[RMDB]
RNA sequence: GGGAACGACUCGAGUAGAGUCGAAAACAGAAAGAGUUCAGUGCUACUCUGCGUGAUUCAAGCUUUCCUGAACUGGAACGUCGGGGGCAAAGCAUACACACACACUCCAAUCCAUCCAUGCAUACAUAGACACAAGACACACACGCUCAAACCCCUACGUAAAUUACCACUUCGGUGGUAAUUUACGAAAAGAAACAACAACAACAAC
Reactivity to DMS in 0.01 (KOAc 150mM, MgCl2 10mM, bicine 150mM(pH8.5), 24C), signal-to-noise 1, nucleotides 027 to 156: c060a120g000a110a050a110g000a030g000u000u000c060a090g000u010g060c040u000a040c040u000c020u100g060c030g040u000g030a210u000u010c130a150a150g000c060u000u000u030c050c000u000g040a020a030c050u020g000g000a050a050c050g000u020c050g010g040g010g090g070c010a070a070a050g010c050a110u000a050c080a060c000a130c010a050c080a060c040u020c070c020a040a210u010c000c050a110u000c050c000a130u000g000c030a100u000a150c070a070u020a040g000a140c030a030c020a050a150g000a130c040a030c030a050c080a010c100g000c060u000c000a040a050a180c020c010c010c030u010a080
Reactivity to 2A3 in 0.01 (KOAc 150mM, MgCl2 10mM, bicine 150mM(pH8.5), 24C), signal-to-noise 3, nucleotides 027 to 156: c050a010g130a090a160a000g080a030g010u080u100c060a030g020u060g060c010u020a030c020u000c030u090g050c040g060u090g020a130u110u080c130a120a040g000c030u060u080u050c020c000u040g040a100a060c040u050g000g100a080a050c050g050u050c040g040g000g000g050g030c010a050a030a040g020c020a020u100a110c030a000c010a000c000a000c000a000c120u040c040c030a010a050u000c040c030a020u020c010c010a040u060g010c020a020u110a100c020a040u120a080g040a010c030a010c010a120a040g060a030c000a010c010a010c000a010c040g020c030u040c050a040a080a180c010c020c020c000u040a010
The record gives the reactivity of an RNA of 207 nucleotides to DMS and 2A3. The DMS profile rests on 1,583 reads. It was measured as part of the RMDB library OK3TST.